[RMDB]
RNA sequence: GGGAACGACUCGAGUAGAGUCGAAAAGUGCCAGGAGGAAUGGUUUUCCACCUGCAGCAGGAAGGAACUGAACCACUGGUCUUUGGCCGCACCAAACUUACCAAUCAUGUCGCGCUGCAGUGGCUGGCUCUAGCACGAGUUUCGACUCGUGCUAGAGAAAAGAAACAACAACAACAAC
Reactivity to DMS in 0.01 (KOAc 150mM, MgCl2 10mM, bicine 150mM(pH8.5), 24C), signal-to-noise 2, nucleotides 027 to 126: g000u000g000c030c010a010g000g010a140g040g020a040a100u010g010g020u000u000u010u010c020c030a190c080c010u010g000c020a050g050c060a090g020g030a130a130g030g000a050a050c220u000g000a050a170c050c030a030c110u000g000g010u000c110u000u000u000g000g010c060c150g000c070a110c050c060a050a060a050c110u000u000a080c050c030a060a070u020c000a040u000g000u000c090g010c180g000c060u000g020c020a020g010u000g020g010c050u000g000g010
Reactivity to 2A3 in 0.01 (KOAc 150mM, MgCl2 10mM, bicine 150mM(pH8.5), 24C), signal-to-noise 2, nucleotides 027 to 126: g110u070g040c010c010a000g000g040a090g000g090a160a090u100g040g020u080u040u040u060c000c010a010c000c030u030g060c030a030g000c020a020g070g050a070a130g070g010a050a030c060u100g030a060a040c050c000a050c060u040g020g060u020c050u090u050u110g080g030c030c090g000c010a090c020c010a000a040a050c010u090u110a020c020c060a030a070u060c050a060u210g080u100c060g000c000g000c060u080g010c010a000g020u000g010g050c010u030g000g000